[RMDB]
RNA sequence: GGGAACGACUCGAGUAGAGUCGAAAAAAAGAGUUGGUGCAUUCGCACUAAAUCUUUGUAUUGCGACGAACUUGUUUGUAGCGGAUACCGCAUCGCUCGGGGGGAACGCUGUUCUCCUCGCGGUUCCAGAUAAGUCACUAUUCGUAGUGACUUAUCUAAAAGAAACAACAACAACAAC
Reactivity to DMS in 0.01 (KOAc 150mM, MgCl2 10mM, bicine 150mM(pH8.5), 24C), signal-to-noise 9, nucleotides 027 to 126: a010a000a010g000a020g010u000u000g000g010u000g010c000a250u020u030c270g010c000a010c000u000a000a020a030u000c000u000u000u000g000u020a120u010u010g010c020g010a020c020g000a160a020c030u000u000g000u010u010u010g010u000a040g000c020g000g000a080u020a070c180c160g010c120a080u010c010g010c020u000c020g000g000g000g000g000g000a010a010c010g020c250u030g010u000u000c000u000c000c000u000c000g010c020g010g000u000u000c010c010
Reactivity to 2A3 in 0.01 (KOAc 150mM, MgCl2 10mM, bicine 150mM(pH8.5), 24C), signal-to-noise 9, nucleotides 027 to 126: a000a000a000g040a010g020u060u100g010g000u010g010c040a120u180u300c230g000c000a010c000u010a010a010a030u010c000u010u010u020g110u110a140u040u180g130c010g000a010c010g010a030a030c010u030u030g070u160u140u110g050u080a010g010c010g000g030a070u150a200c100c110g060c090a080u100c020g000c020u010c020g000g000g000g000g000g010a020a000c060g140c300u250g030u010u000c000u000c000c000u000c000g000c010g020g000u010u000c000c000